[RMDB]
RNA sequence: GGGAACGACUCGAGUAGAGUCGAAAAUCUGACGUGUCGCUGGCCCGGCUGUGAUGAGCCCGCCACCAAUUGCGACCUGGAUCAUACGAUCCCGUAUGCCGCUGGUGGGCCCACCCAUGCGUCGAACACGAAGGACACGCUUCGGCGUGUCCUUCGUAAAAGAAACAACAACAACAAC
Reactivity to 2A3 in 0.01 (KOAc 150mM, MgCl2 10mM, bicine 150mM(pH8.5), 24C), signal-to-noise 1, nucleotides 027 to 126: u080c050u040g020a010c010g080u070g000u150c050g010c090u070g020g050c080c000c000g050g000c110u000g010u030g050a170u070g010a000g010c000c000c000g030c010c020a030c000c020a160a120u160u050g000c040g020a090c080c040u020g000g000a000u010c030a050u090a300c210g010a050u000c000c000c000g000u030a000u130g020c030c090g090c150u000g000g040u000g000g090g000c000c000c000a050c000c050c000a050u030g010c000g000u000c000g030a020a030c050